Structure probing data (2A3 and DMS) for a 177-nucleotide construct.
[RMDB]
RNA sequence: GGGAACGACUCGAGUAGAGUCGAAAAGCUGGUGCCCUGUGCUGCGGUGGGACGUCAAGGUCAGUUCGUAUGCUGCGGGAAAUGGCCGCCGAGGAGGUAGGGCUUACGCUUGCGUUUGUCUGUUAUAAGUACAUAUUUACUUCGGUAAAUAUGUACUAAAAGAAACAACAACAACAAC
Reactivity to 2A3 in 0.01 (KOAc 150mM, MgCl2 10mM, bicine 150mM(pH8.5), 24C), signal-to-noise 2, nucleotides 027 to 126: g040c050u060g000g150u090g040c030c000c010u030g050u060g040c040u040g010c010g010g030u080g050g010g040a100c000g040u080c050a080a040g140g030u120c030a010g020u020u050c050g010u060a070u300g010c000u030g020c030g000g020g030a060a120a100u110g060g020c020c000g000c000c000g020a040g090g090a010g000g060u050a020g000g000g000c000u020u050a030c030g010c010u020u040g030c020g070u030u060u100g090u030c110u020g120u150u060a160u010a150
Reactivity to DMS in 0.01 (KOAc 150mM, MgCl2 10mM, bicine 150mM(pH8.5), 24C), signal-to-noise 7, nucleotides 027 to 126: g010c010u000g020g010u000g010c010c010c010u000g000u010g010c020u010g010c020g010g010u000g020g020g010a060c050g020u000c080a100a180g010g000u010c010a030g010u000u010c240g030u000a100u010g020c010u000g000c040g020g010g000a060a070a050u000g000g010c000c010g010c020c000g000a110g000g010a090g010g010u000a040g010g010g010c010u000u010a060c170g010c020u000u000g010c120g010u010u010u010g010u010c080u000g010u000u010a130u000a070
Record summary: Conditions: 150 mM KOAc, 10 mM MgCl2 and 150 mM bicine (pH 8.5), 24 C. Source: RMDB library RFMREP, as collected in RNAgym. For DMS the reverse transcriptase was MarathonRT.